Notes
The record gives the reactivity of an RNA of 207 nucleotides to 2A3 and DMS. The DMS profile rests on 5,262 reads. For DMS the reverse transcriptase was MarathonRT. The RNA was probed in 150 mM KOAc, 10 mM MgCl2 and 150 mM bicine (pH 8.5) at 24 C.

RNA sequence: GGGAACGACUCGAGUAGAGUCGAAAAGAUAUGGACCGUGACGAGCGACGAAGUAUGGACUUACUAUGGUCGGAAACGACCAUAGGGGUCCAUACAGAGCUCGUCCGGUCCUAAGUCAAAAGCAACAUUUACACCCUUCGGGGUGUAAAUGUUGCAAACAAUCAGAUAGAUUCGUCUAUCUGAUUGUAAAAGAAACAACAACAACAAC
Reactivity to 2A3 in 0.01 (KOAc 150mM, MgCl2 10mM, bicine 150mM(pH8.5), 24C), signal-to-noise 2, nucleotides 027 to 156: g000a000u020a010u060g010g010a000c000c060g140u300g010a000c010g000a000g040c010g300a300c000g010a110a010g000u000a000u000g000g010a000c010u020u140a080c000u140a000u000g010g000u000c000g000g000a010a020a000c000g000a000c000c010a000u000a000g000g000g000g000u020c010c000a000u000a000c010a000g000a000g010c010u010c000g000u010c000c000g000g000u000c000c000u000a000a000g000u000c010a020a050a010a030g000c000a000a000c000a000u000u000u000a010c000a000c010c020c010u000u090c300g050g000g000g020u000g000u000a000a000a000u000g000u000u000g000c000a000a000
Reactivity to DMS in 0.01 (KOAc 150mM, MgCl2 10mM, bicine 150mM(pH8.5), 24C), signal-to-noise 2, nucleotides 027 to 156: g010a060u000a100u010g000g010a020c010c000g030u010g010a020c000g020a030g000c000g040a300c140g020a150a230g010u000a000u000g000g010a030c010u000u020a180c010u000a020u010g020g010u000c000g010g000a070a060a150c000g020a020c000c000a000u000a010g020g000g020g020u000c000c000a000u010a000c000a040g000a110g030c000u000c000g000u000c000c010g010g000u010c000c000u000a010a060g010u000c000a090a050a140a190g000c000a010a010c010a010u000u000u010a020c000a020c000c000c020u000u010c300g000g050g030g000u000g010u020a000a000a000u000g010u000u020g020c000a020a040